An RNA of 177 nucleotides, treated with 2A3 and DMS and read out base by base.
Reactivities are given for positions 27 through 126.
Conditions: 150 mM KOAc, 10 mM MgCl2 and 150 mM bicine (pH 8.5), 24 C.
RNA sequence: GGGAACGACUCGAGUAGAGUCGAAAAGAAAAGAGCCGCAAGCGCAGAUAUGGGCAAUACCGUAACCGCGGCACGGUACACCGGCAAGCCAUCUAAGAGAGCCGGUGAUAGAUGGCAUACAAAAAAACAGUAAAUAUCUCUUCGGAGAUAUUUACUGAAAAGAAACAACAACAACAAC
Reactivity to 2A3 in 0.01 (KOAc 150mM, MgCl2 10mM, bicine 150mM(pH8.5), 24C), signal-to-noise 1, nucleotides 027 to 126: g040a000a190a000a000g040a040g020c030c030g060c160a180a040g020c040g000c080a010g060a230u120a090u190g030g110g000c050a050a010u040a120c010c010g030u040a110a040c030c030g000c000g050g000c040a010c010g000g000u000a000c010a020c020c010g000g020c060a100a000g060c000c000a000u000c040u140a190a010g110a010g000a020g180c000c000g000g020u000g010a000u010a010g050a010u020g010g000c030a040u090a160c130a080a130a040a020a000a020a000
Reactivity to DMS in 0.01 (KOAc 150mM, MgCl2 10mM, bicine 150mM(pH8.5), 24C), signal-to-noise 2, nucleotides 027 to 126: g000a160a040a110a170g020a190g010c000c020g040c030a130a110g000c060g010c020a030g000a120u010a030u010g020g020g010c050a070a080u010a040c010c010g030u000a040a070c060c030g020c000g010g030c080a030c030g000g000u000a040c090a050c000c010g000g020c060a190a130g000c010c020a010u000c020u000a030a120g010a300g000a170g020c010c000g000g000u000g000a050u000a020g000a030u000g000g020c020a150u000a050c040a010a000a070a030a070a030a120